[RMDB]
Chemical mapping of a 207-nucleotide RNA with 2A3 and DMS. 2A3 is a SHAPE reagent: it acylates the 2'-hydroxyl of flexible nucleotides of all four kinds. For DMS the reverse transcriptase was MarathonRT. For 2A3 the reverse transcriptase was SuperScript II with manganese. The 2A3 profile rests on 8,314 reads.
RNA sequence: GGGAACGACUCGAGUAGAGUCGAAAACUUGGCAACCGUGGUUCUGCCAGAGGUAACGAAGUAGACAUCAACAAGUCUGAGGGUUUUGUAGCUGAUGGCUUUGCCUCUCUCACAGACUACUACGAAUCAGACUACGUAGAGGUUCUUACUUUCUACGCCACUAUAACUCUUUCGAGAGUUAUAGUGGAAAAGAAACAACAACAACAAC
Reactivity to 2A3 in 0.01 (KOAc 150mM, MgCl2 10mM, bicine 150mM(pH8.5), 24C), signal-to-noise 8, nucleotides 027 to 156: c010u030u030g010g000c030a050a050c080c070g100u100g040g040u100u040c050u070g010c010c010a060g030a080g130g050u090a110a050c100g020a060a010g010u040a020g020a020c020a060u070c020a040a070c020a070a020g000u000c000u000g000a010g020g020g010u030u110u190u120g000u010a000g000c000u010g020a090u050g090g000c060u130u060u270g030c000c000u040c010u010c010u030c030a050c010a080g190a300c020u000a000c000u010a010c020g030a020a010u000c000a000g000a010c010u060a040c140g010u030a030g000a020g050g000u100u030c020u050u090a030c000u070u190u040c020u020a020c030g020
Reactivity to DMS in 0.01 (KOAc 150mM, MgCl2 10mM, bicine 150mM(pH8.5), 24C), signal-to-noise 2, nucleotides 027 to 156: c040u000u000g030g020c000a050a060c060c140g010u010g020g020u000u000c060u010g030c020c000a040g010a090g000g000u000a080a170c120g000a000a040g030u000a050g000a040c030a090u000c020a060a090c090a150a060g020u000c020u010g000a060g000g010g030u000u000u000u000g020u000a040g010c020u020g000a250u000g010g010c020u010u000u000g020c020c010u000c100u020c100u000c100a120c050a130g010a170c000u000a050c010u000a080c010g000a130a280u010c020a060g010a070c000u000a080c080g030u000a090g030a070g020g000u010u000c040u000u000a030c020u000u000u010c020u010a040c060g000